[RMDB]
RNA sequence: GGGAACGACUCGAGUAGAGUCGAAAACAUACAUGAGAAGUCGGCACAACUCCCGACUCGCGGUGAGCGAUGCAGCGUAGCGCGAGCUACGCAGCUGCUGUGCGGACGGCUAGCAAAAGCUAGCCGAGAGCGAUUAAAUCUUCGGAUUUAAUCGCUCAAAAGAAACAACAACAACAAC
Reactivity to DMS in 0.01 (KOAc 150mM, MgCl2 10mM, bicine 150mM(pH8.5), 24C), signal-to-noise 3, nucleotides 027 to 126: c100a160u030a100c160a080u030g020a120g050a080a060g010u010c000g020g000c090a130c090a090a180c100u010c030c010c010g010a140c110u010c090g000c060g050g010u040g010a150g020c100g000a040u000g040c030a030g010c000g020u000a010g010c010g000c290g000a230g000c010u000a020c000g020c000a010g020c000u010g000c080u010g000u020g000c000g000g000a110c020g020g010c000u000a000g050c000a120a100a160a130g000c000u000a000g010c000c000g000a050
Reactivity to 2A3 in 0.01 (KOAc 150mM, MgCl2 10mM, bicine 150mM(pH8.5), 24C), signal-to-noise 5, nucleotides 027 to 126: c000a010u290a020c030a080u220g070a070g040a230a040g010u030c010g040g060c090a010c050a250a300c100u040c010c010c000g030a020c020u000c020g060c010g040g060u200g060a020g000c030g100a090u150g030c030a000g000c010g000u020a000g000c030g010c050g040a030g020c000u000a000c000g000c000a020g000c000u020g010c010u020g030u080g020c010g060g050a040c030g010g000c000u000a000g000c000a110a140a280a000g000c000u000a000g000c000c000g000a020